Overview: The data come from the RNA Mapping Database (RMDB), library OK2TRN. This 177-nucleotide RNA was probed chemically with 2A3 and DMS. Conditions: 150 mM KOAc, 10 mM MgCl2 and 150 mM bicine (pH 8.5), 24 C. Reactivities are given for positions 27 through 126. The DMS profile rests on 753 reads. For 2A3 the reverse transcriptase was SuperScript II with manganese.
RNA sequence: GGGAACGACUCGAGUAGAGUCGAAAAAGAGAAGCUGAGUCUGUCGAUCCAGAAGCUCGCCGAAGAGGAUCCGACCUUCAAGGUGCACCUGGAUUCCGAGACCGGCCAGACCGUCAUCGGCGGCAUGCUAUCCGUGCGUGUUCGCACGCACGGAUAGAAAAGAAACAACAACAACAAC
Reactivity to 2A3 in 0.01 (KOAc 150mM, MgCl2 10mM, bicine 150mM(pH8.5), 24C), signal-to-noise 2, nucleotides 027 to 126: a000g110a010g080a080a050g000c010u000g050a040g130u040c030u040g190u200c020g010a000u010c010c030a010g030a060a020g050c070u050c070g030c020c010g070a210a030g030a000g050g000a040u050c090c050g130a130c070c010u110u050c030a090a000g000g020u030g000c010a030c010c030u000g020g020a040u180u030c020c020g040a010g020a000c000c000g000g000c010c000a010g020a090c010c010g030u040c000a190u170c070g060g030c000g010g000c020a050u160g020
Reactivity to DMS in 0.01 (KOAc 150mM, MgCl2 10mM, bicine 150mM(pH8.5), 24C), signal-to-noise 2, nucleotides 027 to 126: a130g030a190g010a140a260g000c020u000g000a140g010u000c000u000g000u000c140g010a040u000c040c010a040g000a140a170g030c120u000c050g000c000c030g010a300a190g020a030g000g010a080u020c180c180g000a080c030c030u000u000c030a040a300g000g020u010g040c260a080c140c000u000g010g020a030u000u000c230c060g000a070g000a000c010c060g050g000c000c030a120g000a120c030c010g010u000c070a080u010c170g000g000c000g010g010c050a110u000g010